Source: RMDB library OK2TRN, as collected in RNAgym. An RNA of 177 nucleotides, treated with DMS and 2A3 and read out base by base. The reactions ran in a buffer of 150 mM KOAc, 10 mM MgCl2 and 150 mM bicine (pH 8.5), at 24 C. For DMS the reverse transcriptase was MarathonRT.

[RMDB]
RNA sequence: GGGAACGACUCGAGUAGAGUCGAAAAGAUUGUUUGCCACUGUGGGGAAUGAAGGAAGGCAGCCAAUCAUCUAAAUAACCAAACAUGUACUCUCACAAGGCCCUAUAUUAAUUAGCACAACCUGUACUCAAUUGAUUCGUUUCGACGAAUCAAUUGAAAAAGAAACAACAACAACAAC
Reactivity to DMS in 0.01 (KOAc 150mM, MgCl2 10mM, bicine 150mM(pH8.5), 24C), signal-to-noise 2, nucleotides 027 to 126: g010a070u010u000g010u010u040u000g020c030c040a220c150u000g000u010g000g030g000g000a130a180u000g010a120a060g030g010a090a090g000g010c020a030g000c060c040a010a040u000c030a070u000c060u000a110a040a050u020a110a130c050c060a070a070a050c100a030u000g020u010a070c090u000c030u000c070a060c100a040a070g000g010c030c060c020u000a010u000a030u020u000a040a090u000u010a130g010c040a040c120a040a040c030c040u010g000u020a130c120
Reactivity to 2A3 in 0.01 (KOAc 150mM, MgCl2 10mM, bicine 150mM(pH8.5), 24C), signal-to-noise 2, nucleotides 027 to 126: g020a020u060u010g030u040u050u060g000c010c000a060c080u060g010u130g030g050g040g060a060a080u180g050a050a140g150g010a100a030g000g000c000a000g000c030c000a000a010u010c000a020u000c000u150a210a040a120u070a010a030c030c030a040a070a010c010a040u150g000u060a030c020u030c010u020c010a010c000a100a000g060g000c010c000c020u010a000u010a020u090u110a160a120u050u120a020g010c040a000c000a060a040c000c000u000g020u080a030c000